[RMDB]
RNA sequence: GGGAACGACUCGAGUAGAGUCGAAAACAGCGGAAGUACACACAAUGAUGUCGGAGUGCAGAGACCAGAUUGAGCAGUGCCUGUGUGCCCUGCCGUACUCCGACAGGCCGGUUGGCCUACAGGCCGCCCUGCUACACUGUUUCGACAGUGUAGCAGGAAAAGAAACAACAACAACAAC
Reactivity to 2A3 in 0.01 (KOAc 150mM, MgCl2 10mM, bicine 150mM(pH8.5), 24C), signal-to-noise 3, nucleotides 027 to 126: c010a010g040c000g030g000a060a000g020u040a030c030a000c000a010c010a110a270u150g100a040u080g050u000c010g020g000a010g010u030g040c050a020g060a020g050a220c050c030a140g080a300u150u160g040a060g060c000a000g010u010g010c000c000u300g050u060g080u240g200c010c000c050u000g000c000c010g000u000a000c010u000c000c010g000a010c000a010g000g000c010c010g300g100u210u300g030g000c010c030u030a040c020a010g300g000c000c000g000c000
Reactivity to DMS in 0.01 (KOAc 150mM, MgCl2 10mM, bicine 150mM(pH8.5), 24C), signal-to-noise 3, nucleotides 027 to 126: c170a110g000c030g000g010a090a060g000u000a040c110a090c100a140c240a070a130u020g010a230u000g000u000c000g000g000a010g030u010g010c010a120g000a140g010a150c140c090a040g010a110u020u000g020a150g000c020a020g010u000g010c000c000u000g050u000g010u000g010c020c010c000u010g010c000c130g010u000a020c020u000c000c000g000a000c020a000g010g000c020c020g020g000u000u010g030g010c020c000u000a020c080a080g020g010c000c030g020c050
This 177-nucleotide RNA was probed chemically with 2A3 and DMS. It was measured as part of the RMDB library OK2TRN. Conditions: 150 mM KOAc, 10 mM MgCl2 and 150 mM bicine (pH 8.5), 24 C.